[RMDB]
RNA sequence: GGGAACGACUCGAGUAGAGUCGAAAAGAUAUGGAGAUGUAACGAGCAACAGCUUCAGUCGGAAACGACUGAAGACAUGCUCAGUUAGAUCAUCUCCUAAGUCAAACUCCGAUGUUCGCAUCGGAGACUAGUGUAAACUGUUCGCAGUUUACACUAGAAAAGAAACAACAACAACAAC
Reactivity to DMS in 0.01 (KOAc 150mM, MgCl2 10mM, bicine 150mM(pH8.5), 24C), signal-to-noise 9, nucleotides 027 to 126: g010a040u010a300u010g010g010a020g010a010u000g010u000a040a020c020g000a020g010c000a040a080c300a210g000c000u000u000c000a000g010u000c000g010g000a120a120a210c000g000a010c000u000g010a010a010g000a010c090a160u000g010c000u000c000a100g020u000u000a060g000a180u020c010a010u000c000u010c000c000u000a020a090g010u000c040a160a100a210c010u000c000c010g000a010u000g010u000u020c280g010c000a020u000c000g000g000a010g000a040
Reactivity to 2A3 in 0.01 (KOAc 150mM, MgCl2 10mM, bicine 150mM(pH8.5), 24C), signal-to-noise 9, nucleotides 027 to 126: g030a010u070a050u150g000g010a000g000a010u010g020u090a030a030c040g010a000g010c030a020a160c060a230g030c000u000u010c000a000g000u010c000g020g010a060a060a050c010g000a000c000u000g010a000a000g010a010c020a030u090g000c000u000c030a010g010u020u050a090g030a220u210c000a000u000c000u000c000c000u020a120a010g050u030c050a090a020a160c010u000c000c010g000a000u010g050u070u120c300g000c190a010u000c010g000g000a000g000a020